[RMDB]
An RNA of 177 nucleotides, treated with DMS and 2A3 and read out base by base. 2A3 adducts were read by reverse transcription with SuperScript II with manganese. The RNA was probed in 150 mM KOAc, 10 mM MgCl2 and 150 mM bicine (pH 8.5) at 24 C.
RNA sequence: GGGAACGACUCGAGUAGAGUCGAAAAGAUAUGGACACCAUGGCCAGCAUCGAUCGGACUGUCUCGGAAACGAGAUUCCGGGAGCUGGUGGUGUCCUAAGUCAAAUCCUAUCCUUCGGGAUAGGAAACAUUGAGGGUUGGUUCGCCAACCCUCAAUGAAAAGAAACAACAACAACAAC
Reactivity to DMS in 0.01 (KOAc 150mM, MgCl2 10mM, bicine 150mM(pH8.5), 24C), signal-to-noise 2, nucleotides 027 to 126: g010a010u000a020u010g000g000a050c000a010c020c000a140u050g070g030c140c010a030g000c010a300u010c210g000a020u000c000g000g010a020c300u030g010u010c000u000c000g020g000a000a020a010c010g000a030g000a020u000u010c000c000g020g000g000a000g020c000u010g000g040u010g010g030u000g000u000c000c000u000a010a040g010u000c010a120a070a230u000c000c000u010a000u000c000c000u000u010c250g020g000g010a020u010a020g000g000a030a040a110
Reactivity to 2A3 in 0.01 (KOAc 150mM, MgCl2 10mM, bicine 150mM(pH8.5), 24C), signal-to-noise 2, nucleotides 027 to 126: g010a000u010a000u040g010g000a010c000a010c040c050a020u140g300g120c120c010a010g030c000a040u300c050g000a000u000c010g000g020a020c070u070g010u000c000u000c030g010g000a010a000a000c010g010a000g020a020u020u000c000c010g050g000g000a020g010c000u020g000g030u030g000g010u010g030u010c010c000u000a000a000g000u020c000a040a050a190u040c000c000u010a000u010c020c030u070u120c300g220g000g000a010u010a000g010g000a010a080a020